An RNA of 177 nucleotides, treated with DMS and 2A3 and read out base by base. The reactions ran in a buffer of 150 mM KOAc, 10 mM MgCl2 and 150 mM bicine (pH 8.5), at 24 C. Values are in units of 0.01, from 0 to 300, in steps of 10. The 2A3 profile rests on 1,516 reads. 2A3 adducts were read by reverse transcription with SuperScript II with manganese.

RNA sequence: GGGAACGACUCGAGUAGAGUCGAAAAGGAUUCGAUGUCCACGUAGGUAACAAUCGCGGUGCCGUCACGCUCGACAACGAUCGGGACGCUGCCGUGUGACUUGCGCACCGCGGCGGCCAUCUCGUCGAGUGCUGGGCAUAUUCGUAUGCCCAGCACUAAAAGAAACAACAACAACAAC
Reactivity to DMS in 0.01 (KOAc 150mM, MgCl2 10mM, bicine 150mM(pH8.5), 24C), signal-to-noise 1, nucleotides 027 to 126: g000g020a060u000u000c220g000a000u010g040u000c040c030a160c030g010u020a060g040g020u020a120a160c140a080a040u000c060g020c100g030g020u010g000c190c020g010u000c060a010c070g030c080u000c030g010a010c030a150a070c160g000a040u000c130g010g000g000a100c030g010c050u000g000c010c050g000u000g020u000g010a020c160u000u000g000c180g010c000a050c010c050g010c000g010g000c040g020g000c000c060a010u000c000u010c190g010u000c020g000
Reactivity to 2A3 in 0.01 (KOAc 150mM, MgCl2 10mM, bicine 150mM(pH8.5), 24C), signal-to-noise 2, nucleotides 027 to 126: g070g000a030u040u020c040g000a000u100g030u020c030c030a060c090g060u100a080g050g030u030a080a040c020a040a100u070c090g010c040g000g020u010g000c010c010g060u070c040a010c010g000c020u040c070g050a050c040a200a100c010g030a110u130c070g020g020g050a070c040g000c080u070g020c050c030g020u040g000u010g010a020c070u090u180g020c030g000c000a000c000c010g000c010g010g000c010g030g020c240c030a020u010c030u040c060g030u020c000g000